[RMDB]
RNA sequence: GGGAACGACUCGAGUAGAGUCGAAAACAAUGAUGCUGUGUUCCUCAGAGAUUUCUGAAUGUUAAAGCAUUGAAAAGUUAAAAUUAUAAUAAAAAGGAAAUAGCAAGUUGAGGAGGAAUGUCCUGUGGACAUAGCAUCGAUUCGUCGAUGCUAUGUCAAAAGAAACAACAACAACAAC
Reactivity to DMS in 0.01 (KOAc 150mM, MgCl2 10mM, bicine 150mM(pH8.5), 24C), signal-to-noise 1, nucleotides 027 to 126: c040a090a020u000g000a230u000g020c050u010g000u020g020u040u020c000c020u000c120a120g010a270g000a160u000u000u010c010u040g000a040a000u010g000u000u010a140a190a300g000c000a060u000u000g010a110a070a030a070g000u040u000a030a070a130a270u030u030a200u020a210a090u020a000a120a170a070a080g010g000a020a030a020u010a020g040c000a040a260g010u000u000g010a020g000g000a060g020g000a070a100u010g010u000c000c020u000g000u010g040

An RNA of 177 nucleotides, treated with DMS and read out base by base.
The reactions ran in a buffer of 150 mM KOAc, 10 mM MgCl2 and 150 mM bicine (pH 8.5), at 24 C.
For DMS the reverse transcriptase was MarathonRT.
The data come from the RNA Mapping Database (RMDB), library OK2TST.
The DMS profile rests on 583 reads.